RNA sequence: GGGAACGACUCGAGUAGAGUCGAAAACCGGAUAUGGUCGUUUUGAAUAUCAAGAGUAUCCGUGACGAGACAACGUUAGGGCAUUUGUGUCAUAUCGAUUAUGAUGAUUACACGACUCCCCUAGUAGGUGCCCUCAGCCGUUCGCGGCUGAGGGCACAAAAGAAACAACAACAACAAC
Reactivity to 2A3 in 0.01 (KOAc 150mM, MgCl2 10mM, bicine 150mM(pH8.5), 24C), signal-to-noise 1, nucleotides 027 to 126: c030c000g000g000a000u000a000u050g300g090u050c140g090u000u170u300u040g230a120a050u190a160u200c000a000a000g000a000g000u050a010u000c010c000g110u160g000a000c070g050a000g120a040c160a150a000c160g000u040u000a000g000g000g000c000a110u000u000u000g000u000g000u010c000a000u000a000u000c000g150a300u140u030a180u300g040a000u150g000a000u070u000a000c000a000c000g000a000c000u030c000c000c000c000u000a000g000u040a000g140
Chemical mapping of a 177-nucleotide RNA with 2A3.